An RNA of 207 nucleotides, treated with 2A3 and DMS and read out base by base.
The 2A3 profile rests on 2,280 reads.
Values cover nucleotides 27 to 156.
[RMDB]
RNA sequence: GGGAACGACUCGAGUAGAGUCGAAAAAGCCAUACCAUUACGAUGGUAUGGCAAGUCCGUGACGGCGAUGGAUCCCGCCUGGCCGCUGCCGAACUGCCGAUCUGGCUGAUGGUUCCUGCCCCGUCAAAAAACGUAAAGCACUUCGGUGCUUUACGAAUCAAGUGUAACCGUUCGCGGUUACACUUGAAAAAGAAACAACAACAACAAC
Reactivity to 2A3 in 0.01 (KOAc 150mM, MgCl2 10mM, bicine 150mM(pH8.5), 24C), signal-to-noise 2, nucleotides 027 to 156: a020g010c000c000a020u010a010c000c000a000u000u070a070c300g100a010u010g000g010u000a000u010g000g000c010a010a020g000u000c010c020g000u020g000a000c010g000g030c100g030a010u050g010g010a010u030c000c000c000g010c000c010u010g000g020c020c020g040c040u030g040c050c070g180a210a160c090u100g040c050c000g040a100u070c030u060g010g030c040u120g020a190u110g030g020u000u010c000c000u020g030c040c010c000c000g000u000c000a040a000a030a010a070a080c000g000u000a000a000a000g000c010a000c010u030u120c300g080g000u000g000c000u010u000u000a000c000g000a000a040
Reactivity to DMS in 0.01 (KOAc 150mM, MgCl2 10mM, bicine 150mM(pH8.5), 24C), signal-to-noise 1, nucleotides 027 to 156: a140g010c020c020a040u000a020c000c000a010u020u010a150c170g010a100u020g020g020u000a060u000g010g040c010a000a010g020u000c030c030g000u000g020a020c020g000g050c030g000a210u000g010g010a120u000c070c030c030g030c020c020u010g010g010c010c050g030c120u030g000c110c050g030a070a110c120u000g020c020c010g000a100u040c030u000g020g030c020u010g040a150u030g000g020u020u000c010c020u000g070c060c090c000c010g000u010c030a000a050a090a100a090a140c020g000u000a050a030a020g020c000a010c010u000u020c300g060g000u000g000c010u000u000u010a010c000g000a070a150